[RMDB]
RNA sequence: GGGAACGACUCGAGUAGAGUCGAAAAAAUUUGUUUGCAUGUAUGUACGGUGUGCAUCCGCCAAAGCAUGAGCCCCGCUUCAAUGAUGCAAAUAACCGUUGGAUGCAACAGUAUCGCUCAUUGGAGAGUAAAUAGUGCGUUUCGACGCACUAUUUACAAAAGAAACAACAACAACAAC
Reactivity to DMS in 0.01 (KOAc 150mM, MgCl2 10mM, bicine 150mM(pH8.5), 24C), signal-to-noise 2, nucleotides 027 to 126: a080a070u010u010u000g000u020u000u000g030c020a010u010g020u010a110u010g000u010a050c050g010g010u010g020u000g010c060a040u000c000c090g000c190c160a060a040a080g010c010a040u000g020a120g000c030c020c030c120g000c010u000u000c070a030a090u010g000a030u010g020c000a050a060a070u000a080a060c030c050g030u000u000g010g000a090u000g010c010a020a020c020a030g020u020a060u000c260g000c030u020c000a100u020u000g000g020a040g010a170
Reactivity to 2A3 in 0.01 (KOAc 150mM, MgCl2 10mM, bicine 150mM(pH8.5), 24C), signal-to-noise 1, nucleotides 027 to 126: a000a000u220u120u030g090u040u010u010g030c020a000u010g000u220a070u150g030u110a060c150g080g000u040g040u000g010c000a010u000c030c010g000c000c030a030a060a020g010c010a010u080g040a030g130c060c040c020c030g020c000u040u040c030a080a050u130g030a030u110g020c040a000a150a080u120a080a020c020c090g020u000u010g030g040a100u220g070c000a000a000c000a000g070u020a020u170c060g020c020u010c020a060u020u130g110g010a100g000a000

Structure probing data (DMS and 2A3) for a 177-nucleotide construct.
Reactivities are given for positions 27 through 126.
Conditions: 150 mM KOAc, 10 mM MgCl2 and 150 mM bicine (pH 8.5), 24 C.
The 2A3 profile rests on 750 reads.
For DMS the reverse transcriptase was MarathonRT.